Conditions: 150 mM KOAc, 10 mM MgCl2 and 150 mM bicine (pH 8.5), 24 C. The record gives the reactivity of an RNA of 207 nucleotides to 2A3. The data come from the RNA Mapping Database (RMDB), library RNAMAK. Reactivities are given for positions 27 through 156.
RNA sequence: GGGAACGACUCGAGUAGAGUCGAAAAGGGGUCGACCUGAUGACCGAGCAUUGAGACUUACUACCCACCCUGAAGCCUCCACGGGAGGUAAGUUGUAAGUGCUCGCAAGGGUCGACGGAGGCACCCAAAGUCCUAAUGGGUUCGCCCAUUAGGACAAACAUCCCGUAACGUUCGCGUUACGGGAUGUAAAAGAAACAACAACAACAAC
Reactivity to 2A3 in 0.01 (KOAc 150mM, MgCl2 10mM, bicine 150mM(pH8.5), 24C), signal-to-noise 2, nucleotides 027 to 156: g060g020g000g000u000c000g000a000c000c000u060g090a290u260g170a190c220c110g010a000g010c020a040u090u300g210a050g020a210c000u050u000a000c000u180a140c000c000c010a000c000c010c000u030g040a050a000g000c000c020u020c000c010a030c030g020g000g030a070g060g020u000a000a010g000u000u000g150u130a200a160g060u010g000c000u010c020g010c040a070a130g070g000g000u010c000g000a000c000g010g000a020g000g000c010a010c020c000c010a090a080a000g020u000c000c000u010a000a010u000g000g050g000u050u090c300g140c010c000c000a010u000u000a000g000g020a000c000a000a000